[RMDB]
RNA sequence: GGGAACGACUCGAGUAGAGUCGAAAAGAUAUGGAUCGUGAUCCAACCGAGCUCCCAUCUACCCACCUAAAUCGGAAACGAUUUAGAGGAUGGCGAGCGUUUGACGUUGGAUCACGAUCCUAAGUCAGACUGUUAAGCGGUUCGCCGCUUAACAGUCAAAAGAAACAACAACAACAAC
Reactivity to DMS in 0.01 (KOAc 150mM, MgCl2 10mM, bicine 150mM(pH8.5), 24C), signal-to-noise 1, nucleotides 027 to 126: g050a070u000a300u010g010g000a030u000c000g070u000g000a000u000c000c000a000a010c030c090g000a150g000c000u010c010c000c010a000u000c010u000a040c040c180c290a300c180c000u000a010a000a000u000c020g050g000a130a080a120c020g000a010u000u000u000a000g000a120g010g010a000u000g000g040c300g000a000g010c000g040u000u020u030g000a160c300g000u000u000g000g000a050u000c010a000c000g000a000u000c000c000u010a020a070g020u000c010a120